[RMDB]
RNA sequence: GGGAACGACUCGAGUAGAGUCGAAAAUGGGUCCUUCCCUACGUGAAGGCUGGCUUCCCCCGCGUGUGGGUGGGAAACCACUGGAGGUGAGAAAGUGCCAGACGAGCAGGCACAGGGCCACUCAGUCAGACUUCUACGCCGCCAGGAGAAGCCUCUACUGACUAAUAAUGUUCGCAUUAUUAGUCAGAAAAGAAACAACAACAACAAC
Reactivity to 2A3 in 0.01 (KOAc 150mM, MgCl2 10mM, bicine 150mM(pH8.5), 24C), signal-to-noise 4, nucleotides 027 to 156: u130g010g010g020u040c020c000u000u060c010c000c010u050a070c090g100u110g110a080a020g040g000c080u040g020g020c020u040u020c030c000c000c010c000g070c090g080u220g050u220g060g040g000u130g020g000g020a040a050a040c000c000a000c000u010g000g020a010g020g000u040g010a030g020a020a120a040g030u070g200c050c030a040g010a020c020g000a010g010c100a220g030g000c030a080c080a180g030g220g000c000c000a010c010u010c010a010g010u010c010a010g010a050c020u030u000c010u090a230c010g000c010c000g020c000c010a000g000g020a110g030a000a010g010c000c000u030c010u040a070
Reactivity to DMS in 0.01 (KOAc 150mM, MgCl2 10mM, bicine 150mM(pH8.5), 24C), signal-to-noise 2, nucleotides 027 to 156: u020g010g010g010u000c010c020u010u000c010c010c020u000a090c110g020u000g000a100a050g010g020c010u020g080g010c050u010u000c010c010c000c010c010g010c200g040u000g030u010g010g060g020u000g050g020g000a060a040a050c000c010a070c030u000g010g010a070g010g020u000g010a260g010a150a050a080g020u010g030c010c010a130g000a060c030g000a060g020c030a120g060g010c030a210c110a130g000g030g030c010c000a040c020u010c010a130g030u000c020a130g010a060c020u010u000c010u000a150c050g000c030c000g000c030c010a060g010g010a130g010a130a150g020c020c000u000c030u010a270
Structure probing data (2A3 and DMS) for a 207-nucleotide construct. The DMS profile rests on 5,124 reads. 2A3 adducts were read by reverse transcription with SuperScript II with manganese. The RNA was probed in 150 mM KOAc, 10 mM MgCl2 and 150 mM bicine (pH 8.5) at 24 C. Reactivities are given for positions 27 through 156. For 2A3, 3,058 sequencing reads were counted.